[RMDB]
RNA sequence: GGGAACGACUCGAGUAGAGUCGAAAAACUUUUAGCGUUUGCAAGACGCUGUUCUUGCAAUGAUCAGGAUUUAGCGCACGGAGGUCCGAAAUCCAGAUCAACAUUUCGGACCUCCGCGCUAAUAAAAAUGAGAUAGACUUUUCGAAGUCUAUCUCAUAAAAGAAACAACAACAACAAC
Reactivity to DMS in 0.01 (KOAc 150mM, MgCl2 10mM, bicine 150mM(pH8.5), 24C), signal-to-noise 3, nucleotides 027 to 126: a090c040u010u000u010u000a090g020c080g020u000u000u000g000c010a030a010g010a010c010g020c250u010g010u000u000c000u000u000g000c010a030a020u000g010a100u000c110a120g000g010a150u020u000u000a010g020c010g020c060a090c210g030g000a020g000g030u000c000c000g000a010a000a000u000c120c110a140g000a170u010c180a090a100c170a050u000u010u000c010g000g000a020c000c000u000c010c000g000c000g000c000u000a000a000u000a010a030a060a090
Reactivity to 2A3 in 0.01 (KOAc 150mM, MgCl2 10mM, bicine 150mM(pH8.5), 24C), signal-to-noise 1, nucleotides 027 to 126: a000c010u100u120u090u160a110g080c030g060u030u040u050g000c000a020a000g020a000c020g070c300u210g070u090u010c000u010u000g000c000a020a020u080g070a070u110c060a040g170g000a070u000u040u000a000g000c000g000c000a020c130g000g000a020g000g000u030c000c020g010a010a000a000u030c100c090a060g050a290u120c070a010a120c030a060u020u010u000c000g000g000a000c000c000u000c000c000g000c000g000c000u000a000a000u000a010a030a000a000
This 177-nucleotide RNA was probed chemically with DMS and 2A3.
2A3 adducts were read by reverse transcription with SuperScript II with manganese.
For 2A3, 1,906 sequencing reads were counted.
High 2A3 reactivity points to a flexible backbone, as in loops and unpaired stretches.
Values are in units of 0.01, from 0 to 300, in steps of 10.